[RMDB]
RNA sequence: GGGAACGACUCGAGUAGAGUCGAAAAACAACGUGUUUUUGAGUGGGCCUGUGUCUCUGUGUGCGCCGUGUGCGGAUAGCUUGCUAUGCGUGUGUGGUUGUGUGUGGAUUGAUGUGGGUUUUAACUUUCGUUAAGAAAAGUUCGCUUUUCUUAACGAAAAAGAAACAACAACAACAAC
Reactivity to 2A3 in 0.01 (KOAc 150mM, MgCl2 10mM, bicine 150mM(pH8.5), 24C), signal-to-noise 3, nucleotides 027 to 126: a000c060a030a030c090g100u070g050u060u040u010u070u120g100a070g020u040g010g020g020c010c020u060g010u020g020u020c000u000c010u070g040u000g010u030g030c020g000c000c010g040u040g010u020g020c010g010g060a020u010a010g010c040u040u100g010c000u020a010u060g140c000g010u030g000u010g010u000g010g000u080u230g020u070g010u010g010u030g050g030a080u010u170g010a020u060g050u050g060g000g000u000u040u020u080a010a010c000u020u010
Reactivity to DMS in 0.01 (KOAc 150mM, MgCl2 10mM, bicine 150mM(pH8.5), 24C), signal-to-noise 2, nucleotides 027 to 126: a060c060a090a090c230g000u010g010u000u000u000u000u000g010a060g020u000g000g000g000c040c030u000g010u000g010u010c020u010c030u010g020u000g020u000g020c040g020c030c030g020u000g020u000g020c030g000g000a050u000a030g010c030u010u010g020c030u000a020u000g010c040g010u000g000u010g020u000g010g020u010u010g040u000g010u000g040u010g000g000a090u010u010g010a050u010g020u000g010g010g010u000u000u000u000a060a140c150u000u000

Source: RMDB library RFMREP, as collected in RNAgym. This 177-nucleotide RNA was probed chemically with 2A3 and DMS. The RNA was probed in 150 mM KOAc, 10 mM MgCl2 and 150 mM bicine (pH 8.5) at 24 C. The DMS profile rests on 4,385 reads. 2A3 adducts were read by reverse transcription with SuperScript II with manganese.